[RMDB]
RNA sequence: GGGAACGACUCGAGUAGAGUCGAAAAGAUGAAUGAUACCGCCAGACGUGGAAUUCUCAUGGGAUGUAGAAAUUGUGGACUUGUUGCUGGACUUUGCAGACCUGAUACUUAUGUGGGCGGAGGAGGCACAUACUUGACGAUUCGUCGUCAAGUAUGUAAAAGAAACAACAACAACAAC
Reactivity to 2A3 in 0.01 (KOAc 150mM, MgCl2 10mM, bicine 150mM(pH8.5), 24C), signal-to-noise 2, nucleotides 027 to 126: g050a060u140g020a060a090u100g040a010u060a090c020c010g010c000c020a040g040a090c020g060u050g000g090a040a080u150u020c040u020c060a060u150g070g000g000a020u040g020u070a050g100a090a130a070u160u100g040u070g030g040a060c040u070u100g080u130u110g080c010u030g040g030a060c030u050u050u060g010c040a020g030a080c020c000u020g020a020u040a140c020u120u110a050u180g020u050g060g000g000c060g030g010a020g030g030a050g000g040c060
Reactivity to DMS in 0.01 (KOAc 150mM, MgCl2 10mM, bicine 150mM(pH8.5), 24C), signal-to-noise 7, nucleotides 027 to 126: g010a100u010g010a110a060u010g010a200u010a090c050c030g010c030c040a050g000a060c080g020u000g000g000a090a100u000u000c050u000c040a080u010g010g000g010a070u000g000u000a040g010a050a060a090u010u000g030u010g010g000a090c100u000u000g020u010u010g010c030u000g000g000a090c090u000u000u000g020c050a050g000a140c040c030u000g010a060u000a070c110u000u000a070u000g020u000g000g000g000c040g000g010a120g000g010a080g000g010c150